[RMDB]
RNA sequence: GGGAACGACUCGAGUAGAGUCGAAAAAGGGAAGAAAAUAAUUUAGAAUGGAGAUUCCGCCCCAGCUUGCGGUGCGGCCGAAAGGCUGUAAGGCAUCCCGGAGAGGGGAGGCAAGGCGAAAGCCAAAAACGGUACACCAUCUUCGGAUGGUGUACAACAAAAUAUAACAGUUCGCUGUUAUAUUUUGAAAAGAAACAACAACAACAAC
Reactivity to DMS in 0.01 (KOAc 150mM, MgCl2 10mM, bicine 150mM(pH8.5), 24C), signal-to-noise 1, nucleotides 027 to 156: a100g000g030g020a110a100g020a230a060a070a110u000a100a190u000u010u000a170g010a190a080u070g000g050a090g000a230u000u000c030c020g000c010c010c040c070a240g020c030u000u010g060c000g010g000u000g010c030g000g030c000c010g010a140a130a240g000g050c030u020g030u020a010a030g000g020c000a100u000c030c000c030g010g000a060g010a140g000g010g030g000a030g000g000c070a120a070g020g060c000g000a120a100a280g000c030c000a040a050a080a080a070c100g010g000u010a040c010a000c030c000a000u000c010u000u050c300g040g000a000u000g010g000u000g020u000a010c010a020a050
Reactivity to 2A3 in 0.01 (KOAc 150mM, MgCl2 10mM, bicine 150mM(pH8.5), 24C), signal-to-noise 2, nucleotides 027 to 156: a000g060g020g040a080a030g070a040a170a050a020u200a100a100u140u210u170a070g020a110a070u100g030g030a050g020a070u050u000c010c010g010c000c000c020c000a020g010c030u050u100g100c050g010g030u030g050c010g000g030c040c020g070a000a010a010g010g000c000u020g040u060a040a040g070g020c030a030u080c030c040c020g040g000a050g020a010g010g000g010g010a000g000g000c080a020a040g010g020c010g030a040a010a000g010c000c040a140a080a000a000a030c070g070g000u000a000c000a000c000c000a000u010c000u030u050c160g060g000a000u000g000g000u000g000u000a000c000a000a000
Chemical mapping of a 207-nucleotide RNA with DMS and 2A3. 2A3 adducts were read by reverse transcription with SuperScript II with manganese. The 2A3 profile rests on 985 reads. DMS adducts were read by reverse transcription with MarathonRT. The RNA was probed in 150 mM KOAc, 10 mM MgCl2 and 150 mM bicine (pH 8.5) at 24 C. It was measured as part of the RMDB library M2RFPK.